Record summary: This 177-nucleotide RNA was probed chemically with DMS and 2A3. The data come from the RNA Mapping Database (RMDB), library 15KREP.
RNA sequence: GGGAACGACUCGAGUAGAGUCGAAAACGCGAGCCUAUCGAGUUUGGAGUCAUCCGGGCCGAAGGGUUGAGACGCACCCACAGACGGGAGCCUCCAGGAGGGUUUGAGGAGAACUCACCUCCAGAGGGACACGUAAAUUGUUCGCAAUUUACGUGUCAAAAGAAACAACAACAACAAC
Reactivity to DMS in 0.01 (KOAc 150mM, MgCl2 10mM, bicine 150mM(pH8.5), 24C), signal-to-noise 2, nucleotides 027 to 126: c080g060c040g030a210g000c030c000u010a080u000c000g010a120g030u000u000u000g020g000a080g020u010c300a130u000c010c010g000g020g000c000c010g040a070a300g010g010g020u000u020g000a060g010a230c080g030c090a120c020c010c000a140c120a140g000a070c150g030g000g010a120g000c000c000u010c020c050a180g050g000a030g010g010g000u020u020u000g030a030g010g000a210g000a110a110c010u000c000a040c000c010u020c000c000a150g010a030g000g000
Reactivity to 2A3 in 0.01 (KOAc 150mM, MgCl2 10mM, bicine 150mM(pH8.5), 24C), signal-to-noise 2, nucleotides 027 to 126: c050g040c000g000a010g010c000c000u030a110u060c080g010a140g220u000u010u040g040g000a000g010u120c100a120u020c070c010g020g010g010c030c010g000a040a070g080g000g000u040u080g040a040g030a060c000g000c020a020c000c030c000a000c030a040g130a020c080g020g040g010a030g060c010c010u000c010c000a130g020g000a000g050g000g020u090u220u300g010a000g010g040a120g050a120a050c020u010c010a030c000c040u010c000c000a000g010a000g000g040
For DMS, 1,063 sequencing reads were counted. The RNA was probed in 150 mM KOAc, 10 mM MgCl2 and 150 mM bicine (pH 8.5) at 24 C. For DMS the reverse transcriptase was MarathonRT.